[RMDB]
RNA sequence: GGGAACGACUCGAGUAGAGUCGAAAAUUCGUCUAGAGGUUUCAAUGUGUCUAUACGAAUUGAACACUGGGCGGUACACCGCUCCCAGUUGGAUGUUAACACUUAGGUAGGGGACACUCCUCUGGGAAAUCGUCAUGAGGUUCGCCUCAUGACGAUUAAAAGAAACAACAACAACAAC
Reactivity to DMS in 0.01 (KOAc 150mM, MgCl2 10mM, bicine 150mM(pH8.5), 24C), signal-to-noise 2, nucleotides 027 to 126: u020u010c010g030u000c010u000a020g000a140g030g010u010u000u010c070a050a020u000g010u000g010u020c200u010a160u020a050c060g010a100a050u000u000g000a090a100c120a090c000u000g010g000g000c020g000g010u000a050c200a190c040c010g000c110u000c010c000c010a030g000u010u010g000g000a050u000g000u000u030a100a110c070a050c050u010u000a140g060g030u010a060g020g020g010g000a040c100a000c140u000c000c000u020c010u000g000g010g010a020
Reactivity to 2A3 in 0.01 (KOAc 150mM, MgCl2 10mM, bicine 150mM(pH8.5), 24C), signal-to-noise 1, nucleotides 027 to 126: u020u010c000g030u030c010u000a020g010a060g210g110u090u130u260c040a030a040u060g050u040g090u140c050u150a140u030a200c000g130a100a020u040u010g050a000a000c000a000c000u000g000g000g030c020g040g040u030a020c170a060c060c000g000c000u020c000c000c030a020g000u140u010g040g000a030u110g010u020u070a130a090c090a030c080u090u130a060g000g180u020a010g010g200g000g030a000c020a000c040u000c010c020u000c000u010g010g040g010a040
Source information: Chemical mapping of a 177-nucleotide RNA with DMS and 2A3. DMS adducts were read by reverse transcription with MarathonRT. The 2A3 profile rests on 860 reads.